The data come from the RNA Mapping Database (RMDB), library OK1LIB. This 177-nucleotide RNA was probed chemically with DMS and 2A3. DMS adducts were read by reverse transcription with MarathonRT. For 2A3, 2,301 sequencing reads were counted.
[RMDB]
RNA sequence: GGGAACGACUCGAGUAGAGUCGAAAAGUCUCGCCGAACUCGCAGCAGCGUCGCCGACAGACGUCGCGCCGUCGGCCGACGCUAUCGCGUCGUUCGCCGCCGCCCACGAGUCACACGAGGCGACGCCUGAUACGGAGCAGUUCGCUGCUCCGUAUCAAAAAGAAACAACAACAACAAC
Reactivity to DMS in 0.01 (KOAc 150mM, MgCl2 10mM, bicine 150mM(pH8.5), 24C), signal-to-noise 1, nucleotides 027 to 126: g000u020c000u000c000g050c140c140g000a130a020c050u000c000g010c000a210g000c080a190g000c020g000u010c000g020c020c010g030a170c120a090g000a060c030g000u050c200g000c090g000c190c060g000u090c050g040g000c050c120g000a000c000g050c020u000a000u000c300g040c050g000u000c200g040u060u020c000g000c120c080g000c090c050g000c020c120c060a180c040g060a040g000u000c060a020c230a110c210g030a120g000g060c040g020a000c000g040c000c110
Reactivity to 2A3 in 0.01 (KOAc 150mM, MgCl2 10mM, bicine 150mM(pH8.5), 24C), signal-to-noise 2, nucleotides 027 to 126: g020u000c020u030c050g000c040c030g040a080a080c020u050c090g000c050a110g000c020a000g000c050g020u000c000g030c010c010g030a040c030a080g010a030c050g130u100c020g060c090g060c080c030g030u060c030g050g000c050c070g000a020c000g090c020u090a090u220c090g020c000g010u030c060g010u040u050c050g000c020c010g050c020c030g030c000c040c000a080c010g000a010g020u050c020a050c010a000c130g000a020g020g000c020g010a020c010g000c000c000

The reactions ran in a buffer of 150 mM KOAc, 10 mM MgCl2 and 150 mM bicine (pH 8.5), at 24 C.